The record gives the reactivity of an RNA of 177 nucleotides to 2A3 and DMS. For 2A3 the reverse transcriptase was SuperScript II with manganese. The 2A3 profile rests on 1,582 reads. For DMS the reverse transcriptase was MarathonRT. Reactivities are rounded to 0.1 and cut off at 0 and 3. The DMS profile rests on 1,497 reads.
RNA sequence: GGGAACGACUCGAGUAGAGUCGAAAACAAUUGAGCGUCGCACACACACAGACUAAGUCUGACACUGACAGAGCCUAAACCGCUCUGUCAGUGUCCGAGAUAUCGUUCUUAAUGUGAGCAGAGGAAAGUAAACAUGAUGCUUCGGCAUCAUGUUUACAAAAGAAACAACAACAACAAC
Reactivity to 2A3 in 0.01 (KOAc 150mM, MgCl2 10mM, bicine 150mM(pH8.5), 24C), signal-to-noise 1, nucleotides 027 to 126: c020a010a100u150u260g060a070g070c110g160u080c020g000c040a020c010a010c000a000c010a010c010a070g030a010c010u050a040a100g090u030c020u010g030a010c000a000c000u020g000a010c010a010g000a000g000c000c000u070a070a040a020c000c050g000c010u020c000u010g000u000c000a010g010u000g020u000c000c000g010a000g010a010u060a040u070c040g090u180u010c010u020u100a050a080u030g000u010g040a040g010c080a040g040a050g070g040a090a100a030
Reactivity to DMS in 0.01 (KOAc 150mM, MgCl2 10mM, bicine 150mM(pH8.5), 24C), signal-to-noise 3, nucleotides 027 to 126: c080a150a110u020u000g030a090g000c020g020u000c050g020c010a090c050a020c050a050c060a100c220a070g000a050c020u010a060a200g020u000c060u000g010a000c000a000c000u000g010a010c000a010g000a020g000c000c010u020a040a080a070c300c300g010c000u000c000u000g000u000c000a000g010u010g000u000c010c150g010a010g010a080u000a150u000c110g000u000u000c000u000u000a200a150u000g010u000g000a050g000c020a090g010a080g030g010a040a050a120